[RMDB]
Structure probing data (2A3 and DMS) for a 207-nucleotide construct. The RNA was probed in 150 mM KOAc, 10 mM MgCl2 and 150 mM bicine (pH 8.5) at 24 C. DMS adducts were read by reverse transcription with MarathonRT. The data come from the RNA Mapping Database (RMDB), library M2RFPK. For DMS, 7,585 sequencing reads were counted. 2A3 adducts were read by reverse transcription with SuperScript II with manganese.
RNA sequence: GGGAACGACUCGAGUAGAGUCGAAAACCGGAAUGGUUCCGCCGUGAUCGGGCCAUGCAAUAGUUGCCAACGACAACUAGGCUCCGGUUGCUCAGGCAGCGUAACGCUGCUUGAAAGACCACAUGAAUUAGCGCGACAUUGUUCGCAAUGUCGCGAACUUAGAUUAUAACUUCGGUUAUAAUCUAAGAAAAGAAACAACAACAACAAC
Reactivity to 2A3 in 0.01 (KOAc 150mM, MgCl2 10mM, bicine 150mM(pH8.5), 24C), signal-to-noise 7, nucleotides 027 to 156: c010c000g000g030a070a060u070g010g010u300u290c010c030g000c050c140g190u210g040a250u100c010g000g000g000c000c010a010u050g010c010a040a300u010a020g010u000u010g010c040c110a200a090c140g100a140c010a010a010c030u010a010g050g000c010u000c030c010g000g000u000u020g000c000u000c010a000g010g000c000a010g000c020g070u150a140a050c300g000c010u010g000c000u000u000g000a010a000a010g020a020c020c030a030c040a150u210g140a180a100u130u110a130g070c000g000c000g000a000c000a000u000u020g000u050u080c130g000c080a010a000u000g000u000c000g010c000g000a000a000
Reactivity to DMS in 0.01 (KOAc 150mM, MgCl2 10mM, bicine 150mM(pH8.5), 24C), signal-to-noise 3, nucleotides 027 to 156: c020c000g010g000a070a020u010g020g020u000u000c010c010g030c070c130g000u000g030a070u000c020g020g000g000c010c020a050u010g010c100a110a150u000a010g010u000u000g030c000c020a220a200c160g010a060c010a030a010c010u000a050g000g000c040u000c030c030g040g010u000u000g000c120u010c030a040g000g010c010a020g020c000g010u000a160a120c160g010c000u000g000c000u000u000g000a050a080a100g020a230c010c010a110c100a180u010g000a150a150u000u000a100g020c000g010c020g020a030c020a010u000u000g000u010u010c250g040c020a000a000u000g000u000c020g000c000g010a010a060